[RMDB]
RNA sequence: GGGAACGACUCGAGUAGAGUCGAAAAUUGCCGAUCAGGCUGUGUUGUGGCGGGGGCGAAACAGGAUCGACACGGGUGUAAAGAUCGCUCUUUUACUCGGCAUGAUACCACCGUUAUCGGGUCAACAAAAAGAAUAUGUGGUUCGCCACAUAUUCAACUUGGUAACAUUCUUCGGAAUGUUACCAAGAAAAGAAACAACAACAACAAC
Reactivity to 2A3 in 0.01 (KOAc 150mM, MgCl2 10mM, bicine 150mM(pH8.5), 24C), signal-to-noise 3, nucleotides 027 to 156: u080u030g050c020c000g010a080u100c100a090g060g000c020u050g030u020g020u060u130g040u070g060g030c050g020g000g000g010g010c010g010a040a010a000c030a050g060g010a040u080c010g020a010c030a020c080g040g020g020u090g030u090a070a080a010g030a020u060c030g010c020u030c000u000u120u030u040a040c040u030c000g000g000c000a010u090g010a010u030a040c000c040a010c010c010g080u080u070a010u070c020g010g010g040u030c000a020a040c030a040a100a010a000a000g010a000a000u000a000u000g010u000g000g060u010u050c150g010c090c000a000c000a000u000a000u000u000c000a000a000
Reactivity to DMS in 0.01 (KOAc 150mM, MgCl2 10mM, bicine 150mM(pH8.5), 24C), signal-to-noise 2, nucleotides 027 to 156: u000u000g000c020c010g020a110u000c070a100g000g070c030u000g010u000g040u000u000g020u000g010g040c020g050g020g040g040g030c070g040a080a080a130c040a090g020g040a050u000c020g000a090c020a090c040g000g000g070u000g010u010a030a010a080g000a070u000c060g030c110u000c010u000u000u000u000a070c020u010c000g030g030c020a080u000g010a090u000a070c020c020a070c010c000g010u000u000a040u000c100g000g040g070u010c060a080a140c130a030a010a070a080a100g010a050a010u000a000u000g030u000g000g020u000u000c300g000c000c000a000c000a010u000a000u000u000c000a060a060
Conditions: 150 mM KOAc, 10 mM MgCl2 and 150 mM bicine (pH 8.5), 24 C. An RNA of 207 nucleotides, treated with 2A3 and DMS and read out base by base. For 2A3, 2,479 sequencing reads were counted. Source: RMDB library M2RFPK, as collected in RNAgym. Values cover nucleotides 27 to 156. The DMS profile rests on 3,415 reads.